An RNA of 177 nucleotides, treated with 2A3 and DMS and read out base by base.
For 2A3, 20,400 sequencing reads were counted.
The RNA was probed in 150 mM KOAc, 10 mM MgCl2 and 150 mM bicine (pH 8.5) at 24 C.
Values cover nucleotides 27 to 126.
[RMDB]
RNA sequence: GGGAACGACUCGAGUAGAGUCGAAAAUAGCUGGAAUAGCGAUGAGAACUUCAACUAUGUCGCAGAACCGAUGCCUGCUGUUGAUGGCGGCGAUGGCCUGGCGACAGUGAAAUUGCCGCGCGAGCAGUAAAUUAUGGAGUUUCGACUCCAUAAUUUAAAAAGAAACAACAACAACAAC
Reactivity to 2A3 in 0.01 (KOAc 150mM, MgCl2 10mM, bicine 150mM(pH8.5), 24C), signal-to-noise 9, nucleotides 027 to 126: u100a010g030c040u050g050g050a110a080u060a120g010c030g050a070u070g050a040g030a130a060c040u100u060c050a070a080c050u120a100u240g050u010c010g000c040a010g040a120a050c020c020g030a050u190g030c010c020u070g000c010u040g040u240u130g150a270u270g070g000c000g000g000c020g010a050u110g010g010c010c010u020g100g020c020g030a040c000a000g000u030g050a010a030a040u050u070g040c010c010g010c010g010c030g040a010g020c010a010g020
Reactivity to DMS in 0.01 (KOAc 150mM, MgCl2 10mM, bicine 150mM(pH8.5), 24C), signal-to-noise 9, nucleotides 027 to 126: u030a060g010c040u010g010g010a090a100u040a120g000c010g010a060u020g010a110g010a090a100c150u030u020c130a070a090c050u010a090u010g010u000c010g020c010a050g010a140a210c020c020g010a110u030g010c020c010u020g030c010u000g010u020u020g020a130u040g000g010c000g000g000c010g010a050u020g000g010c200c010u020g000g000c190g000a090c010a010g000u010g000a030a040a030u000u010g010c010c000g010c000g010c040g010a090g000c040a070g010